[RMDB]
RNA sequence: GGGAACGACUCGAGUAGAGUCGAAAACAAGCGGGCGCGCACCACCUUUACCUACGUUGCGGUGGCCGUUGCCGGCAGCGACGACCAGAAGGCGGCCUUUCGUCGCGCGGUGAAUAAGGUUCACGCGUGACUCUUACACGUUCGCGUGUAAGAGUCAAAAAGAAACAACAACAACAAC
Reactivity to DMS in 0.01 (KOAc 150mM, MgCl2 10mM, bicine 150mM(pH8.5), 24C), signal-to-noise 7, nucleotides 027 to 126: c090a120a130g010c060g010g000g010c030g020c060g020c100a110c040c050a050c040c030u000u000u000a090c060c060u010a090c190g010u000u010g010c090g010g010u000g010g010c160c030g010u000u010g020c040c020g000g010c050a100g010c050g010a040c040g010a070c140c110a110g010a080a080g020g000c020g000g010c040c040u000u000u000c040g010u000c040g000c010g010c060g010g010u010g000a030a050u030a100a100g020g000u000u010c030a040c020g010c040g010
Reactivity to 2A3 in 0.01 (KOAc 150mM, MgCl2 10mM, bicine 150mM(pH8.5), 24C), signal-to-noise 5, nucleotides 027 to 126: c050a040a040g040c040g020g000g000c010g000c020g000c020a030c010c010a040c000c010u070u120u100a080c040c040u080a080c090g090u070u100g020c030g030g060u020g030g000c010c010g060u050u170g020c030c000g080g000c010a010g030c010g060a070c020g030a070c010c050a040g050a130a040g110g000c010g010g030c000c000u070u160u080c040g020u010c010g000c000g000c010g030g030u050g050a060a080u160a180a060g120g000u060u120c020a010c030g040c010g030